[RMDB]
RNA sequence: GGGAACGACUCGAGUAGAGUCGAAAAGAAAGAAAGAAAGCUCUGCAACAAGAAAGGGCACUUUGCCACUGUUUGUAGAAGCUCUUCUAAAUCUACAAAUUCUGUGGUAGUAGGUACUGAAGAUCAAAUGUUGACAGGUAUUCGUACCUGUCAACAUAAAAGAAACAACAACAACAAC
Reactivity to DMS in 0.01 (KOAc 150mM, MgCl2 10mM, bicine 150mM(pH8.5), 24C), signal-to-noise 3, nucleotides 027 to 126: g000a080a130a060g040a090a120a050g000a080a070a110g020c020u000c000u000g020c070a030a060c120a050a080g010a090a070a080g010g000g010c020a140c110u020u010u070g010c000c000a060c010u000g000u010u000u000g010u000a000g000a040a060g000c060u030c100u020u020c050u010a050a130a080u040c000u000a040c050a010a060a050u000u020c060u000g000u050g000g010u020a070g010u000a080g010g000u000a090c080u000g010a090a080g000a070u030c070a030a070
Reactivity to 2A3 in 0.01 (KOAc 150mM, MgCl2 10mM, bicine 150mM(pH8.5), 24C), signal-to-noise 4, nucleotides 027 to 126: g070a020a070a000g080a010a070a000g070a040a090a000g010c010u020c000u020g020c010a080a030c030a140a000g200a300a130a020g020g030g020c040a080c040u090u120u190g000c000c000a010c010u010g040u100u110u050g000u010a000g040a050a010g020c020u010c000u080u050c010u060a150a180a070u000c000u010a040c020a040a020a040u230u050c120u170g120u050g070g010u020a030g030u050a020g030g080u040a060c070u070g040a080a020g020a090u200c090a040a150

The record gives the reactivity of an RNA of 177 nucleotides to DMS and 2A3. For 2A3 the reverse transcriptase was SuperScript II with manganese. It was measured as part of the RMDB libraries RFM100 and RFMREP.